Chemical mapping of a 177-nucleotide RNA with 2A3 and DMS. As a SHAPE reagent, 2A3 marks flexible, mostly unpaired nucleotides at the ribose 2'-OH. Values cover nucleotides 27 to 126. The reactions ran in a buffer of 150 mM KOAc, 10 mM MgCl2 and 150 mM bicine (pH 8.5), at 24 C. For 2A3 the reverse transcriptase was SuperScript II with manganese.
RNA sequence: GGGAACGACUCGAGUAGAGUCGAAAAGAAGUACUGUUCGCAGUACUUCAAACGGGAACGGCAAGGCCAAGCCGAAGCCGAACGGCAAGCCGAAGGCCAAAAAAACCGUUCCCUUCGGGGAACGGAAGUAAGAAUACGUCUUCGGACGUAUUCUUACAAAAGAAACAACAACAACAAC
Reactivity to 2A3 in 0.01 (KOAc 150mM, MgCl2 10mM, bicine 150mM(pH8.5), 24C), signal-to-noise 1, nucleotides 027 to 126: g010a010a000g020u000a000c010u010g020u070u120c260g000c100a000g010u000a000c010u010u000c000a010a000a000c050g030g020g060a090a090c050g010g040c040a090a150g060g040c020c020a040a020g000c000c010g020a010a000g080c030c010g040a050a020c060g020g000c040a010a030g030c020c020g090a070a070g100g000c020c000a040a010a010a010a010a000a060c010c000g000u000u010c000c000c010u000u010c200g020g010g010g000a000a010c000g000g000a000a020
Reactivity to DMS in 0.01 (KOAc 150mM, MgCl2 10mM, bicine 150mM(pH8.5), 24C), signal-to-noise 3, nucleotides 027 to 126: g010a000a000g010u000a010c000u000g020u010u010c150g060c000a000g040u000a000c000u000u000c000a040a120a120c140g010g010g020a110a160c070g010g000c010a120a130g020g000c030c040a140a150g010c000c010g010a110a150g000c070c070g000a080a100c120g000g000c000a100a140g000c000c040g030a110a160g010g000c010c040a030a000a080a040a080a160a100c010c000g000u000u000c000c000c000u000u010c130g020g000g000g010a010a020c000g000g010a010a040